This 177-nucleotide RNA was probed chemically with DMS and 2A3. It was measured as part of the RMDB library RFMREP. For 2A3, 4,338 sequencing reads were counted.
[RMDB]
RNA sequence: GGGAACGACUCGAGUAGAGUCGAAAAUGCUUACCACAGGCUGUGUUCUUACACUGACUGUAUAGAAAGAGGAGGUAGAGUAAACCUACCCCAUAUACACCUCAGCUCAGGCCCUGUGCCUGGUCUGCUAUGAAGGAGUGUUCGCACUCCUUCAUAGAAAAGAAACAACAACAACAAC
Reactivity to DMS in 0.01 (KOAc 150mM, MgCl2 10mM, bicine 150mM(pH8.5), 24C), signal-to-noise 4, nucleotides 027 to 126: u000g010c060u000u000a110c120c140a090c010a010g000g000c000u000g000u000g000u000u020c210u010u030a060c040a020c010u000g010a040c030u010g010u000a080u010a080g010a070a070a080g020a130g010g010a100g010g010u000a020g000a120g020u010a070a070a180c120c000u000a030c000c010c000c020a100u010a060u010a070c150a100c050c030u010c020a010g010c020u000c010a010g020g010c010c030c190u010g010u010g010c000c010u000g000g000u000c020u000g010
Reactivity to 2A3 in 0.01 (KOAc 150mM, MgCl2 10mM, bicine 150mM(pH8.5), 24C), signal-to-noise 4, nucleotides 027 to 126: u040g010c010u050u070a050c040c010a000c040a010g010g000c000u000g010u010g010u130u190c080u200u230a010c020a010c030u010g020a010c010u010g050u020a060u070a080g180a040a140a010g100a090g060g020a110g010g020u010a010g010a050g080u210a060a140a090c000c000u000a020c000c000c010c010a020u050a010u010a170c080a040c020c010u030c020a010g000c000u000c020a000g000g000c020c010c060u170g060u180g030c000c000u000g000g010u010c010u010g030